Chemical mapping of a 177-nucleotide RNA with DMS and 2A3. 2A3 is a SHAPE reagent: it acylates the 2'-hydroxyl of flexible nucleotides of all four kinds. For 2A3 the reverse transcriptase was SuperScript II with manganese.
[RMDB]
RNA sequence: GGGAACGACUCGAGUAGAGUCGAAAACACAAAACAAAACAAACAAACAACAAAAGCAAGAGCAGAAACUAUUGGAAAAUGAUUUAUUCACCAAUAUUUUAAAGGUUCUUCCUGUUCUAAGCAAGGAAGAAUACAUAGUCUUCGGACUAUGUAUUCUAAAAGAAACAACAACAACAAC
Reactivity to DMS in 0.01 (KOAc 150mM, MgCl2 10mM, bicine 150mM(pH8.5), 24C), signal-to-noise 3, nucleotides 027 to 126: c060a070c080a070a100a080a080c110a080a050a050a090c100a040a080a110c130a070a040a040c130a040a060c060a060a070a190a120g010c070a070a010g020a040g010c010a090g000a030a070a020c110u000a010u000u000g010g000a100a030a060a160u010g000a060u000u000u030a090u050u000c070a100c010c000a000a010u000a010u000u000u000u010a020a050a080g000g000u000u000c030u000u010c040c000u010g010u010u010c050u000a040a110g000c070a060a050g000g020a080
Reactivity to 2A3 in 0.01 (KOAc 150mM, MgCl2 10mM, bicine 150mM(pH8.5), 24C), signal-to-noise 1, nucleotides 027 to 126: c020a000c050a010a050a140a000c050a030a110a020a000c050a040a140a020c040a030a120a010c040a050a000c010a030a100a090a030g020c020a010a000g030a010g000c020a010g080a060a040a010c020u010a020u020u020g030g020a050a140a130a190u050g030a090u050u260u250a100u120u060c010a010c010c000a000a020u000a030u040u110u060u100a150a190a050g060g010u050u020c000u070u020c010c020u020g000u040u040c040u060a080a040g020c010a050a010g090g020a070